[RMDB]
RNA sequence: GGGAACGACUCGAGUAGAGUCGAAAAAGUCACCUAUUACGAUAGGUGACAUUUGAACCAGCGAACAAUUCAGUUGCGAGAUUCGAGAUUUCAGUCUGAAUCAUAGUAGCCAUUACGAUGGCUACAACUCACUCCCGACUGUUCGCAGUCGGGAGAAGUAUUUUUCUUGCUUCGGCAAGAAAAAUACAAAAGAAACAACAACAACAAC
Reactivity to 2A3 in 0.01 (KOAc 150mM, MgCl2 10mM, bicine 150mM(pH8.5), 24C), signal-to-noise 1, nucleotides 027 to 156: a000g000u000c000a000c000c000u000a000u000u070a070c180g090a050u000a000g010g000u000g000a000c000a000u020u010u030g070a060a020c010c020a010g150c030g000a010a000c040a010a060u000u110c000a000g020u020u000g010c010g030a000g000a050u010u020c060g030a000g020a150u020u120u260c090a090g180u120c000u000g000a010a020u030c070a140u070a110g000u000a000g000c010c000a000u020u030a030c210g150a030u010g000g000c000u000a000c010a010a000c000u100c000a080c000u010c050c000c000g090a010c010u000g070u070u090c300g040c060a010g020u010c000g030g000g000a000g000a000a000
This 207-nucleotide RNA was probed chemically with 2A3. It was measured as part of the RMDB library M2RFPK. The 2A3 profile rests on 538 reads. The reactions ran in a buffer of 150 mM KOAc, 10 mM MgCl2 and 150 mM bicine (pH 8.5), at 24 C.